An RNA of 207 nucleotides, treated with 2A3 and DMS and read out base by base. For 2A3, 6,660 sequencing reads were counted. High DMS reactivity at an A or C suggests that its Watson-Crick edge is free. The data come from the RNA Mapping Database (RMDB), library RNAMAK. For 2A3 the reverse transcriptase was SuperScript II with manganese.
[RMDB]
RNA sequence: GGGAACGACUCGAGUAGAGUCGAAAAACCAUCAUUCGUGAUGGUACAAUCGGGGUCACCGUUUGACGGACAUGCUGGCAUACUGAAGCCUCCACGGUAUGACAGCAACAGCCCGAGGUGACGGAGGCACCCAAAACUCGUGCGUUCGCGCACGAAACCAUCAUGCUAGAUUCGUCUAGCAUGAUGGAAAAGAAACAACAACAACAAC
Reactivity to 2A3 in 0.01 (KOAc 150mM, MgCl2 10mM, bicine 150mM(pH8.5), 24C), signal-to-noise 6, nucleotides 027 to 156: a000c000c000a010u000c000a000u040u150c200g150u050g020a000u000g010g020u020a040c060a010a150u070c050g020g010g040g060u110c060a040c080c040g090u200u200u270g160a110c040g010g010a050c110a150u300g000c000u000g000g000c000a010u010a000c000u010g020a100a010g010c000c000u000c000c010a030c000g010g000u000a010u010g010a010c000a000g030c020a040a040c060a080g080c000c000c000g000a040g010g030u070g020a060c030g020g000a000g000g000c000a030c000c000c000a030a100a050a070c060u030c000g010u000g020c000g020u050u050c250g000c000g000c130a010c010g000a060a010a000
Reactivity to DMS in 0.01 (KOAc 150mM, MgCl2 10mM, bicine 150mM(pH8.5), 24C), signal-to-noise 1, nucleotides 027 to 156: a070c000c000a000u000c030a210u000u020c220g090u010g000a020u000g000g060u000a040c090a050a050u000c020g000g010g050g020u000c040a080c030c000g010u000u000u010g050a300c100g040g030a150c060a260u000g010c010u010g020g000c000a070u000a040c010u000g020a020a050g010c020c010u000c040c030a300c000g010g000u000a010u000g020a020c010a060g060c020a050a010c190a200g000c000c000c020g030a110g000g010u000g040a070c060g000g000a040g060g130c010a090c030c000c110a110a050a060a060c180u000c000g030u000g000c030g000u000u010c300g040c020g230c010a000c010g020a010a050a160